This 207-nucleotide RNA was probed chemically with DMS and 2A3. The RNA was probed in 150 mM KOAc, 10 mM MgCl2 and 150 mM bicine (pH 8.5) at 24 C. DMS adducts were read by reverse transcription with MarathonRT. For DMS, 2,766 sequencing reads were counted.
RNA sequence: GGGAACGACUCGAGUAGAGUCGAAAAUGAUUAGCUACCCUGCACGGCGGCAAUAUUAAAUGAUCACCCGCAAUACUAUGAGCUCUGGGCUUCAUCUUCCUAUUCACCGUAGGAGGUCUAACGGGCAUUGUACUAGCUAAUUCCUCCCUAGACAUUGCACUAAGCAAACGUUCGCGUUUGCUUAGUGAAAAGAAACAACAACAACAAC
Reactivity to DMS in 0.01 (KOAc 150mM, MgCl2 10mM, bicine 150mM(pH8.5), 24C), signal-to-noise 2, nucleotides 027 to 156: u000g000a110u020u000a060g000c010u000a020c020c040c030u000g000c060a080c110g030g020c070g040g000c030a070a140u020a110u000u000a070a130a130u000g000a150u020c070a110c080c000c000g010c030a090a140u000a090c140u000a040u000g010a110g000c030u000c100u000g040g010g060c040u010u000c040a060u000c020u000u000c010c000u020a050u010u000c140a090c170c160g040u000a040g020g020a010g010g000u000c020u000a080a100c060g020g000g030c000a090u010u000g030u000a050c050u010a030g020c010u020a010a060u000u000c100c070u000c000c020c000u010a130g000a110c090a150u010u030g000
Reactivity to 2A3 in 0.01 (KOAc 150mM, MgCl2 10mM, bicine 150mM(pH8.5), 24C), signal-to-noise 5, nucleotides 027 to 156: u120g000a010u000u000a000g000c000u010a020c020c010c050u040g000c080a070c050g040g010c010g010g030c070a040a050u110a090u220u260a190a190a130u230g040a070u130c040a050c050c010c010g010c010a020a090u120a150c070u110a070u130g040a000g050c010u000c100u130g020g080g000c020u080u110c040a100u040c030u080u050c010c000u080a060u120u280c090a070c090c030g000u010a010g000g020a010g020g010u000c020u060a100a050c040g010g000g010c020a020u020u090g000u010a070c040u010a030g000c000u010a000a010u090u040c020c010u010c000c020c000u050a060g030a060c050a090u060u200g030